RNA sequence: GGGAACGACUCGAGUAGAGUCGAAAAGUGCACAGCGAACACCCAAGGAUGCUAACAUGGCUCCCCCUGGUCUCCUGAAUCUGUGCUAAAGUAAAUCUGAUUUGUACCUCUGCAUUUGGAGAGCUGCUAUACACCUGGUGUUCGCACCAGGUGUAUAAAAAGAAACAACAACAACAAC
Reactivity to 2A3 in 0.01 (KOAc 150mM, MgCl2 10mM, bicine 150mM(pH8.5), 24C), signal-to-noise 4, nucleotides 027 to 126: g060u060g010c010a010c010a050g010c010g030a070a010c010a060c030c020c000a020a020g080g000a040u080g010c070u130a110a050c060a200u170g050g000c000u010c000c010c010c010c010u030g010g030u000c020u010c040c000u020g050a110a080u090c000u010g000u000g030c020u060a080a070a050g050u070a010a070a120u050c030u050g080a130u040u120u150g040u060a080c010c020u020c010u060g020c040a090u080u050u140g040g000a020g000a000g040c030u060g000c020
Reactivity to DMS in 0.01 (KOAc 150mM, MgCl2 10mM, bicine 150mM(pH8.5), 24C), signal-to-noise 4, nucleotides 027 to 126: g010u010g000c050a030c020a020g010c050g010a100a080c150a110c050c000c030a130a080g000g020a060u020g020c030u010a090a100c180a080u040g000g010c080u010c010c010c020c010c020u010g000g010u010c080u000c020c000u000g020a070a100u010c020u000g010u010g010c020u000a070a120a110g010u030a030a080a090u030c060u000g020a130u020u000u010g000u010a090c120c010u000c040u000g000c050a080u010u030u010g020g010a050g010a060g000c040u020g000c100